[RMDB]
RNA sequence: GGGAACGACUCGAGUAGAGUCGAAAAAUGCCAGCUAAACCUUGACAGGCAGGGAGGGCAUGGCUGGAACAAGUCACGCUCGAUUUAGGGUUAGAGAGCAACCAAACAAGAGUCUGGAAGAUUCAUGCAAUCGCAGGAAUUUCGAUUCCUGCGAUUGAAAAGAAACAACAACAACAAC
Reactivity to DMS in 0.01 (KOAc 150mM, MgCl2 10mM, bicine 150mM(pH8.5), 24C), signal-to-noise 2, nucleotides 027 to 126: a120u010g000c010c060a130g030c020u000a070a110a110c030c020u020u030g010a140c110a130g000g030c050a080g000g010g000a120g020g000g010c020a060u000g020g010c020u000g000g000a110a090c200a070a060g010u000c040a030c100g000c000u010c020g000a180u010u010u000a050g020g000g000u000u010a050g010a120g000a100g010c030a110a130c020c020a080a050a080c180a020a100g010a050g000u000c020u010g000g000a100a110g000a070u000u000c040a120u000g000

Source: RMDB library OK2TRN, as collected in RNAgym. Structure probing data (DMS) for a 177-nucleotide construct. Values cover nucleotides 27 to 126.